[RMDB]
RNA sequence: GGGAACGACUCGAGUAGAGUCGAAAACCGUAGAUGGGCGGAGUCAGGGGCAGGGGGUAAGCUCCUGUUCCGAGAGGGAGACAACCCAGACCGGGGUUAAGGCCCCUAAGUGCCGGCUAAGUGUAAAUAGGUAAAAAAACUUCGGUUUUUUUACCUAAAAAGAAACAACAACAACAAC
Reactivity to 2A3 in 0.01 (KOAc 150mM, MgCl2 10mM, bicine 150mM(pH8.5), 24C), signal-to-noise 1, nucleotides 027 to 126: c000c000g010u060a030g090a140u190g000g000g110c030g030g020a010g070u110c200a040g030g000g000g040c020a000g040g000g010g010g000u130a070a270g150c000u010c000c000u000g010u050u090c010c000g010a000g000a030g000g000g000a170g000a130c070a100a000c030c020c000a020g060a130c040c100g050g000g000g030u090u050a120a000g080g000c000c000c000c000u010a110a030g020u020g130c030c000g030g130c050u190a200a100g030u000g010u130a040a110a110
Reactivity to DMS in 0.01 (KOAc 150mM, MgCl2 10mM, bicine 150mM(pH8.5), 24C), signal-to-noise 2, nucleotides 027 to 126: c020c010g000u040a090g010a090u020g010g010g000c040g000g010a130g010u010c120a110g010g000g000g030c020a030g000g020g020g000g020u020a070a070g010c000u000c000c000u000g020u000u000c030c000g000a090g010a090g000g010g000a090g000a150c100a120a030c030c000c000a130g000a140c270c180g030g000g020g020u000u030a120a080g000g000c080c000c010c000u000a070a070g000u010g000c000c020g040g020c040u000a040a120g000u020g010u000a050a080a140